[RMDB]
The record gives the reactivity of an RNA of 177 nucleotides to DMS and 2A3. It was measured as part of the RMDB library M2PK50. Conditions: 150 mM KOAc, 10 mM MgCl2 and 150 mM bicine (pH 8.5), 24 C.
RNA sequence: GGGAACGACUCGAGUAGAGUCGAAAAGCUAUACCGUUCGCGGUAUAGCAAAAUCUUUCCGAGAUGUACUAAUACGAGCCUAUAAGUCAACGGUUCGAGUCCAAACGGGUUACUUCGGUAACCCGAAGACAUUGUGGAGGUUCGCCUCCACAAUGUCAAAAGAAACAACAACAACAAC
Reactivity to DMS in 0.01 (KOAc 150mM, MgCl2 10mM, bicine 150mM(pH8.5), 24C), signal-to-noise 2, nucleotides 027 to 126: g000c000u000a010u000a030c000c000g070u000u010c220g000c010g000g000u000a000u000a020g030c000a020a060a070a030u010c190u000u010u000c010c000g010a100g020a150u000g020u010a070c010u000a040a130u030a250c060g010a010g010c020c020u000a100u010a120a060g000u020c120a060a060c180g010g000u000u000c030g000a150g000u010c040c100a050a090a290c000g010g000g010u000u000a010c000u000u020c060g020g020u010a010a010c000c000c000g000a010a000
Reactivity to 2A3 in 0.01 (KOAc 150mM, MgCl2 10mM, bicine 150mM(pH8.5), 24C), signal-to-noise 2, nucleotides 027 to 126: g000c000u000a000u000a000c010c000g030u010u070c200g000c020g070g030u020a000u000a000g000c000a000a000a000a000u020c000u020u050u010c020c030g010a000g020a120u120g090u190a040c000u100a090a130u160a180c040g000a000g020c020c000u180a160u090a300a080g260u210c040a040a050c040g000g000u020u000c030g000a000g050u030c030c010a040a050a070c000g000g030g000u000u000a000c000u010u030c120g070g000u010a000a010c100c000c000g000a000a000